[RMDB]
RNA sequence: GGGAACGACUCGAGUAGAGUCGAAAAAAUUUUUUCGGUCUCGUCAGACAAAUCAGUGAGAUGAUGGUCAUAGCGAAAGCACACGCACGAAAUGUCACUGAUGAAAAAGUGCGUGUGACCAAUUUAACAUAGCCUUACACUUCGGUGUAAGGCUAUGAAAAGAAACAACAACAACAAC
Reactivity to 2A3 in 0.01 (KOAc 150mM, MgCl2 10mM, bicine 150mM(pH8.5), 24C), signal-to-noise 1, nucleotides 027 to 126: a000a000u230u100u000u000u030u040c030g010g030u030c040u010c030g040u110c010a010g000a120c010a030a200a040u030c010a000g050u060g060a100g000a180u150g010a030u010g020g030u000c050a100u190a040g010c010g080a070a010a020g000c000a000c000a000c000g020c000a000c020g060a060a050a050u100g020u030c030a070c110u210g050a070u120g040a040a060a000a010a000g000u000g060c000g000u000g000u000g030a000c000c000a020a080u080u150u040a060a020
Reactivity to DMS in 0.01 (KOAc 150mM, MgCl2 10mM, bicine 150mM(pH8.5), 24C), signal-to-noise 2, nucleotides 027 to 126: a060a020u060u010u010u000u000u010c100g010g000u000c030u000c070g000u000c140a090g010a100c050a030a140a060u000c010a030g020u000g000a070g020a090u000g000a090u000g000g000u000c000a110u000a120g010c010g000a110a070a110g000c010a090c020a000c020g000c000a010c010g000a030a090a080u000g000u000c030a020c080u010g010a020u010g020a020a060a020a070a130g030u010g000c030g010u000g010u000g000a000c000c040a070a060u010u010u000a050a180

Structure probing data (2A3 and DMS) for a 177-nucleotide construct.
Reactivities are given for positions 27 through 126.
The reactions ran in a buffer of 150 mM KOAc, 10 mM MgCl2 and 150 mM bicine (pH 8.5), at 24 C.